[RMDB]
RNA sequence: GGGAACGACUCGAGUAGAGUCGAAAAGCUUGCGGAGCGAUAUGAGAUUGAGCGCCAUUUGAGUGCGAUUCCUAAGCAAUUGUCGACGCAGUCGGAUGUGGUUGCGCGCUUGCGUAAGAGUUAUGGCAACGUGAGCAAGUUUCGACUUGCUCACGUUAAAAGAAACAACAACAACAAC
Reactivity to DMS in 0.01 (KOAc 150mM, MgCl2 10mM, bicine 150mM(pH8.5), 24C), signal-to-noise 4, nucleotides 027 to 126: g000c010u000u000g010c010g000g000a120g010c010g000a090u010a090u010g010a160g010a130u020u000g000a280g010c040g020c010c010a220u010u000u020g010a070g040u000g020c010g000a160u010u000c010c020u010a100a190g000c060a040a030u000u010g000u010c000g020a090c020g000c070a040g010u000c020g020g020a120u000g020u000g010g010u000u000g000c020g000c020g000c030u010u000g000c020g020u000a040a080g000a160g010u000u000a110u030g020g000c150
Reactivity to 2A3 in 0.01 (KOAc 150mM, MgCl2 10mM, bicine 150mM(pH8.5), 24C), signal-to-noise 2, nucleotides 027 to 126: g030c000u020u020g030c020g030g020a030g010c040g040a020u040a140u300g230a140g030a060u130u090g040a030g020c020g000c020c010a110u160u110u210g210a160g010u080g030c020g030a070u060u100c000c000u060a070a030g000c000a040a050u120u070g110u110c000g000a070c020g020c090a030g020u050c010g090g100a110u170g110u240g070g080u070u100g010c020g000c020g010c010u070u020g100c010g030u000a010a010g010a040g060u130u100a060u200g060g000c010